Annotation: Source: RMDB library OK3TST, as collected in RNAgym. This 207-nucleotide RNA was probed chemically with 2A3 and DMS. DMS adducts were read by reverse transcription with MarathonRT. The reactions ran in a buffer of 150 mM KOAc, 10 mM MgCl2 and 150 mM bicine (pH 8.5), at 24 C. The DMS profile rests on 12,673 reads. The 2A3 profile rests on 7,997 reads.
[RMDB]
RNA sequence: GGGAACGACUCGAGUAGAGUCGAAAACAGGUGAAGAGUGUGGAGUAUUCUAAGAUGAUCAAGAAAAAUGUAUGAAACAGAUAUUCCAACAAAUGGGAGAAAGAUCAUACUAGAGGAAUGUAAUAGGAUUUUCAGUCAUUGUUGACUGCCAUUUUGAGUAAUUUAGUACUUUCGAGUACUAAAUUACAAAAGAAACAACAACAACAAC
Reactivity to 2A3 in 0.01 (KOAc 150mM, MgCl2 10mM, bicine 150mM(pH8.5), 24C), signal-to-noise 9, nucleotides 027 to 156: c050a020g030g030u040g040a050a030g040a030g030u070g010u030g030g000a020g020u040a060u090u050c040u080a070a070g020a070u080g010a020u040c050a050a060g120a100a110a040a040a020u100g020u060a060u060g050a150a110a020c010a000g100a040u030a040u060u020c020c000a020a030c050a080a250a080u090g030g000g000a020g030a020a050a000g010a010u030c010a010u030a060c020u030a030g020a020g070g040a080a030u070g020u100a070a090u050a160g020g030a040u060u060u080u190c030a000g020u020c040a050u060u100g050u060u040g020a040c030u010g020c030c010a090u080u070u030u030g040a040
Reactivity to DMS in 0.01 (KOAc 150mM, MgCl2 10mM, bicine 150mM(pH8.5), 24C), signal-to-noise 5, nucleotides 027 to 156: c070a080g010g030u010g020a060a040g000a070g030u000g020u010g010g000a120g010u000a070u000u000c040u000a080a110g030a090u000g000a090u010c030a080a110g010a040a080a080a120a090u010g020u000a090u010g010a080a050a130c060a110g020a100u000a150u000u000c010c020a050a140c090a060a090a140u000g020g010g000a060g010a070a090a170g010a090u000c020a030u000a050c030u000a080g010a070g000g000a070a050u000g020u000a050a110u000a050g020g010a120u000u000u000u010c060a090g000u010c040a120u000u000g010u010u000g000a080c060u000g020c020c060a200u000u000u000u000g000a300